[RMDB]
RNA sequence: GGGAACGACUCGAGUAGAGUCGAAAAGAUAUGGAAUCGCGUACAGCAACAGCUACCACUCGGAAACGAGUGUGUAGACAUGCUGUACACGAUUCCUAAGUCAAAAGAAACCACUUCGGUGGUUUCACUGUAUGUCGCAGUUCGCUGCGACAUACAGAAAAGAAACAACAACAACAAC
Reactivity to 2A3 in 0.01 (KOAc 150mM, MgCl2 10mM, bicine 150mM(pH8.5), 24C), signal-to-noise 1, nucleotides 027 to 126: g030a030u090a030u200g000g000a020a010u010c010g030c010g050u010a010c000a010g000c010a030a080c020a220g020c020u020a010c000c010a010c000u000c000g000g040a100a050a040c000g010a020g010u010g030u080g000u010a000g000a000c000a020u050g000c000u020g010u000a010c000a000c010g000a000u000u000c000c000u000a060a000g000u000c040a000a010a000a230g030a000a000a000c000c010a000c000u100u150c300g200g000u000g010g000u000u000u000c010a000
Reactivity to DMS in 0.01 (KOAc 150mM, MgCl2 10mM, bicine 150mM(pH8.5), 24C), signal-to-noise 2, nucleotides 027 to 126: g030a040u020a300u000g010g000a000a000u000c000g010c000g010u000a010c000a000g000c030a030a110c270a210g010c000u000a000c010c000a030c010u010c000g010g000a110a090a200c000g020a020g020u000g010u010g040u000a000g000a030c120a130u000g010c000u000g000u000a010c000a000c000g000a000u000u000c000c000u000a010a130g000u000c000a100a080a170a210g000a020a020a030c000c000a000c000u000u000c230g010g000u000g010g020u000u000u010c000a120